RNA sequence: GGGAACGACUCGAGUAGAGUCGAAAAUUAAGAAGCAUGGCCUUUUCAGCCUUGGUCUUCCGUCUUAGCUGAUCCGAAUACAAGGCGAGAAUCGCUAGGUCCCGGGUCUCAUAAGUGUAGAACGGGCCCAGUCGGGAUAUUUCGAUAUCCCGACUGGAAAAGAAACAACAACAACAAC
Reactivity to 2A3 in 0.01 (KOAc 150mM, MgCl2 10mM, bicine 150mM(pH8.5), 24C), signal-to-noise 4, nucleotides 027 to 126: u230u110a170a040g080a050a020g030c040a080u120g060g000c020c010u050u180u070u060c070a000g020c010c000u020u030g070g030u060c040u080u000c000c030g020u000c030u030u090a100g010c160u060g020a090u050c060c050g020a020a020u080a100c060a030a020g040g000c010g020a060g080a070a140u090c020g010c020u010a020g020g080u160c040c000c000g070g100g000u000c020u000c020a110u200a270a100g110u120g070u190a050g060a030a010c040g000g000g010c000
Reactivity to DMS in 0.01 (KOAc 150mM, MgCl2 10mM, bicine 150mM(pH8.5), 24C), signal-to-noise 2, nucleotides 027 to 126: u060u070a100a110g030a070a080g010c030a070u000g010g010c000c040u000u030u020u000c100a300g020c030c000u000u000g000g010u000c080u000u000c000c120g000u000c010u000u010a170g010c110u010g000a010u020c070c140g020a090a090u010a050c050a060a070g010g010c020g010a080g030a060a040u000c140g000c020u030a050g020g040u000c180c020c000g000g010g030u030c000u020c030a070u010a040a090g010u010g000u050a040g000a030a010c000g010g010g000c120
Chemical mapping of a 177-nucleotide RNA with 2A3 and DMS.
Source: RMDB library OK1LIB, as collected in RNAgym.
2A3 adducts were read by reverse transcription with SuperScript II with manganese.